[RMDB]
About this RNA
The record gives the reactivity of an RNA of 177 nucleotides to DMS and 2A3. Reactivities are given for positions 27 through 126. The DMS profile rests on 6,836 reads. Conditions: 150 mM KOAc, 10 mM MgCl2 and 150 mM bicine (pH 8.5), 24 C. For 2A3, 9,645 sequencing reads were counted.
RNA sequence: GGGAACGACUCGAGUAGAGUCGAAAAGAUAUGGACCGUCUUUAUUUCAGUCAUGUGGGAGCUGGUGUGUCGGAAACGACACUAACAGCUUUGAUCACAUGACUGAAAUAAAGAGCGGUCCUAAGUCCGUAUGGUUUAUGUUCGCAUAAACCAUACGAAAAGAAACAACAACAACAAC
Reactivity to DMS in 0.01 (KOAc 150mM, MgCl2 10mM, bicine 150mM(pH8.5), 24C), signal-to-noise 2, nucleotides 027 to 126: g010a100u000a300u010g000g010a010c000c000g020u000c000u000u010u000a000u000u000u000c000a010g010u000c000a010u000g010u000g000g000g000a010g020c010u000g000g000u000g020u010g010u000c000g000g000a110a090a250c000g010a020c000a010c000u000a070a130c000a010g010c000u010u000u020g010a090u010c000a010c000a000u000g000a010c010u000g000a000a010a000u000a000a000a010g010a060g040c000g020g000u000c000c000u000a010a110g000u000c050
Reactivity to 2A3 in 0.01 (KOAc 150mM, MgCl2 10mM, bicine 150mM(pH8.5), 24C), signal-to-noise 2, nucleotides 027 to 126: g060a050u130a090u230g020g000a000c000c000g040u020c010u020u000u020a010u000u010u010c010a000g000u000c010a000u010g020u020g010g030g030a030g000c010u020g020g030u060g000u000g000u030c000g020g000a040a110a100c010g010a000c020a010c010u040a300a050c000a010g000c030u080u050u050g030a030u030c000a000c030a010u000g010a000c000u000g000a000a000a000u000a000a020a000g000a000g000c000g000g000u000c010c010u000a000a000g010u020c030